Chemical mapping of a 177-nucleotide RNA with DMS and 2A3.
The data come from the RNA Mapping Database (RMDB), library RFM100.
2A3 adducts were read by reverse transcription with SuperScript II with manganese.
2A3 is a SHAPE reagent: it acylates the 2'-hydroxyl of flexible nucleotides of all four kinds.
The reactions ran in a buffer of 150 mM KOAc, 10 mM MgCl2 and 150 mM bicine (pH 8.5), at 24 C.
RNA sequence: GGGAACGACUCGAGUAGAGUCGAAAAGCCCCCCUGUAAAGCGGUUCGCUAUGCCGGGGCCACUGUGAACCCUGCCGCCUGCCGGAACACUCUUCGCUCCGGACCAGCUCAGCCUCUGAUAAGCUGGUGUUGAGGACUGAUUCGUCAGUCCUCAACAAAAAGAAACAACAACAACAAC
Reactivity to DMS in 0.01 (KOAc 150mM, MgCl2 10mM, bicine 150mM(pH8.5), 24C), signal-to-noise 2, nucleotides 027 to 126: g010c020c040c000c050c050c000u000g030u030a050a080a050g030c050g010g020u000u000c010g030c020u010a080u020g020c020c020g000g020g000g000c030c020a050c080u010g050u020g010a130a080c080c040c010u010g010c080c030g000c020c050u000g020c020c020g060g000a040a090c080a080c120u000c050u000u010c050g020c040u000c030c010g000g020a080c050c020a000g010c000u000c030a130g000c060c050u000c030u000g020a100u020a120a090g000c000u000g000g000
Reactivity to 2A3 in 0.01 (KOAc 150mM, MgCl2 10mM, bicine 150mM(pH8.5), 24C), signal-to-noise 4, nucleotides 027 to 126: g010c000c000c000c000c000c000u040g080u160a110a070a010g070c050g030g070u070u120c040g020c030u060a030u150g050c030c010g010g010g040g000c020c000a070c020u040g020u010g100a050a040c000c000c000u010g020c020c000g030c010c020u040g010c040c000g030g030a060a010c050a010c020u140c050u080u130c080g000c020u010c010c030g020g000a020c000c000a000g010c010u020c020a030g030c030c020u050c020u030g030a070u040a170a040g000c010u020g000g030